An RNA of 177 nucleotides, treated with 2A3 and DMS and read out base by base. Source: RMDB libraries RFM100 and RFMREP, as collected in RNAgym.
[RMDB]
RNA sequence: GGGAACGACUCGAGUAGAGUCGAAAAAGAUUUACAUCCCAGGCACAAUCACACUGCAGCUACGUGGCUGCCUUUGCAGAACCGAGUCACACAUUUUUUUCUUUCUCCUUUCUAAGUGUGAAAUUUUCACUAGUAAAUAGUUCGCUAUUUACUAGUGAAAAGAAACAACAACAACAAC
Reactivity to 2A3 in 0.01 (KOAc 150mM, MgCl2 10mM, bicine 150mM(pH8.5), 24C), signal-to-noise 9, nucleotides 027 to 126: a000g070a040u080u080u080a040c050a050u020c010c000c010a010g060g010c040a020c030a080a090u060c010a030c010a010c060u060g000c010a010g000c000u100a070c110g140u190g050g000c010u010g010c000c010u100u090u120g010c040a020g020a050a010c020c020g020a030g050u040c010a010c000a000c020a100u050u020u010u010u010u070u040c020u030u070u020c020u040c020c020u040u130u070c060u100a110a110g020u020g010u000g080a080a100a050u010u010u000u000
Reactivity to DMS in 0.01 (KOAc 150mM, MgCl2 10mM, bicine 150mM(pH8.5), 24C), signal-to-noise 2, nucleotides 027 to 126: a080g020a200u040u020u010a090c140a100u020c000c000c000a080g000g010c060a020c070a080a090u000c090a080c080a040c040u000g000c040a050g000c020u010a070c150g020u010g000g000c000u000g010c020c020u010u010u000g010c130a070g010a070a080c080c040g000a120g000u000c040a030c020a030c050a000u000u040u000u000u000u000u000c040u010u000u000c000u000c020c030u000u010u000c080u000a070a080g000u000g040u000g010a040a040a120u000u000u000u020

The reactions ran in a buffer of 150 mM KOAc, 10 mM MgCl2 and 150 mM bicine (pH 8.5), at 24 C. Values cover nucleotides 27 to 126.